[RMDB]
The data come from the RNA Mapping Database (RMDB), library M2PK90. Structure probing data (2A3 and DMS) for a 177-nucleotide construct. 2A3 adducts were read by reverse transcription with SuperScript II with manganese. Conditions: 150 mM KOAc, 10 mM MgCl2 and 150 mM bicine (pH 8.5), 24 C.
RNA sequence: GGGAACGACUCGAGUAGAGUCGAAAAGCAGCAGUGAAUUAAAAUAAACAUGAAGAUCAUGAACAAGAUACAAACGGCAAGUAUCGUUCGAUCCAUGAGCCGAAUAAUAUCACAAAGAAGAAGAAAAUAACAUAUUCUAGUUCGCUAGAAUAUGUUAAAAAGAAACAACAACAACAAC
Reactivity to 2A3 in 0.01 (KOAc 150mM, MgCl2 10mM, bicine 150mM(pH8.5), 24C), signal-to-noise 5, nucleotides 027 to 126: g050c030a000g000c030a020g000u010g030a030a030u090u090a060a100a030a110u170a050a070a020c000a000u010g040a080a070g020a030u030c010a050u090g010a020a010c030a100a110g010a010u030a010c010a020a230a010c060g170g000c090a130a070g000u000a000u010c010g010u030u020c020g010a000u000c010c010a010u020g010a020g080c020c010g030a000a010u060a040a010u060a070u060c020a010c010a050a120a010g100a040a010g040a060a010g050a030a200a000a040
Reactivity to DMS in 0.01 (KOAc 150mM, MgCl2 10mM, bicine 150mM(pH8.5), 24C), signal-to-noise 6, nucleotides 027 to 126: g010c060a060g010c090a090g010u010g010a040a070u000u010a040a070a070a080u010a100a110a130c030a020u000g000a140a110g010a020u000c010a070u010g020a030a030c060a110a090g020a030u000a020c030a050a090a120c130g010g010c120a080a100g010u000a010u000c010g010u000u000c030g010a020u000c020c010a030u000g000a070g010c070c070g000a070a070u000a060a040u000a090u000c030a030c060a050a050a090g000a080a070g000a070a090g000a060a060a060a100